[RMDB]
RNA sequence: GGGAACGACUCGAGUAGAGUCGAAAAGCGUACUACAAAGCCUAUGAAGCCAUGGAGGCCUAUACUACCCACCAGCUCCCAAAUAGGAGCUGAGGUAUAGGUGAAGUGGUGGAGGCUUUGUAUCGCAAACGGCUACACGGUUCGCCGUGUAGCCGAACCCAUCAUUUAUGUUCGCAUAAAUGAUGGGAAAAGAAACAACAACAACAAC
Reactivity to 2A3 in 0.01 (KOAc 150mM, MgCl2 10mM, bicine 150mM(pH8.5), 24C), signal-to-noise 2, nucleotides 027 to 156: g020c010g030u100a100c010u000a000c030a000a000a000g000c000c000u300a300u290g030a020a000g010c000c010a000u010g000g060a060g220g080c010c000u000a000u000a010c010u050a040c060c080c060a050c030c000a020g010c000u000c000c020c010a140a300a120u300a130g000g000a000g020c000u010g000a000g020g000u000a000u000a000g020g030u140g020a050a010g010u010g000g000u000g010g010a000g010g000c000u000u000u000g000u000a000u040c000g010c000a010a110a000c010g000g010c000u020a000c000a000c000g000g060u070u100c180g070c150c000g000u000g000u000a000g020c000c000g000a000a000
Reactivity to DMS in 0.01 (KOAc 150mM, MgCl2 10mM, bicine 150mM(pH8.5), 24C), signal-to-noise 1, nucleotides 027 to 156: g010c010g040u000a030c100u010a040c010a040a080a080g020c010c000u000a300u030g050a300a300g000c000c030a060u020g030g020a300g000g000c010c010u000a010u000a000c000u000a080c100c000c000a300c200c000a010g000c000u030c010c000c010a020a140a210u010a040g000g000a020g030c000u000g000a000g030g000u010a010u000a010g030g020u010g020a290a290g000u020g010g000u000g030g000a020g030g040c000u000u000u000g000u000a000u000c000g010c020a080a100a020c000g030g020c020u000a010c010a030c110g020g070u000u000c300g000c000c040g010u010g000u000a000g050c020c000g000a000a030

The record gives the reactivity of an RNA of 207 nucleotides to 2A3 and DMS. Source: RMDB library RNAMAK, as collected in RNAgym. DMS adducts were read by reverse transcription with MarathonRT. Values cover nucleotides 27 to 156.